Chemical mapping of a 207-nucleotide RNA with 2A3. It was measured as part of the RMDB library OK3TST. 2A3 adducts were read by reverse transcription with SuperScript II with manganese.

[RMDB]
RNA sequence: GGGAACGACUCGAGUAGAGUCGAAAAAGUGUACUCUUUCCGCAGAAAGUAAAAAUGGCCUUGCUAAAGAAAUUAAUUUUAUGUUCAAGUGCUAUUUCUUUACGGCACCAAGAAAUAAGCAUUUCUAGCAGUCCUUAACCGCCAUAAUGCCCUAAAAGCACUACUGACUAUUCGUAGUCAGUAGUGCAAAAGAAACAACAACAACAAC
Reactivity to 2A3 in 0.01 (KOAc 150mM, MgCl2 10mM, bicine 150mM(pH8.5), 24C), signal-to-noise 2, nucleotides 027 to 156: a000g120u070g050u050a020c020u010c000u050u050u000c060c060g110c020a030g100a090a060a020g030u100a030a040a030a210a190u070g010g000c020c020u060u100g000c000u030a070a000a170g020a070a090a120u070u130a070a110u110u140u080u080a070u260g100u000u170c030a010a010g000u000g040c000u020a070u000u080u020c030u020u120u100a110c120g020g000c000a020c030c020a140a000g040a080a080a000u110a190a000g020c000a000u020u120u070c020u020a050g000c000a000g040u000c000c020u020u000a010a080c030c040g040c020c000a030u050a150a070u170g080c000c010c000u080a070a090a040a000
The reactions ran in a buffer of 150 mM KOAc, 10 mM MgCl2 and 150 mM bicine (pH 8.5), at 24 C.